[RMDB]
RNA sequence: GGGAACGACUCGAGUAGAGUCGAAAAAGCGUUGAGGGCUAAGGCCCUCAAGAAAAGGAAAGUUGCCCUCCAGAAGGAGCGGGCAACCCAACUGGCCCAGCGCCAGCUGGAAGGAGAACGCCGGGCACGGUAUGAAGUGAUUCGUCACUUCAUACCGAAAAGAAACAACAACAACAAC
Reactivity to 2A3 in 0.01 (KOAc 150mM, MgCl2 10mM, bicine 150mM(pH8.5), 24C), signal-to-noise 2, nucleotides 027 to 126: a000g100c060g020u010u040g000a000g000g010g040c030u060a060a210g210g010c030c010c000u000c000a000a000g000a000a040a010a000g040g010a160a060a020g000u000u000g010c020c010c000u000c000c010a080g060a300a110g090g010a030g060c100g020g000g000c000a000a040c000c000c020a030a050c050u080g050g010c000c010c070a090g000c080g000c060c020a020g010c010u010g010g040a030a030g030g040a080g020a060a010c020g000c000c060g020g010g000c080a040
Reactivity to DMS in 0.01 (KOAc 150mM, MgCl2 10mM, bicine 150mM(pH8.5), 24C), signal-to-noise 4, nucleotides 027 to 126: a100g020c080g010u000u000g010a010g010g000g010c000u010a140a140g050g010c000c000c000u000c000a010a020g010a070a070a110a120g000g010a070a090a090g000u000u000g010c000c000c020u000c000c000a190g010a110a140g010g000a030g010c130g010g020g000c010a020a010c020c020c050a050a080c030u000g000g010c000c010c130a130g030c120g000c010c020a030g010c020u000g000g010a150a070g010g000a060g000a120a080c050g010c000c020g010g010g020c110a170
Source: RMDB library OK2TRN, as collected in RNAgym. The record gives the reactivity of an RNA of 177 nucleotides to 2A3 and DMS. The RNA was probed in 150 mM KOAc, 10 mM MgCl2 and 150 mM bicine (pH 8.5) at 24 C. For DMS, 4,714 sequencing reads were counted.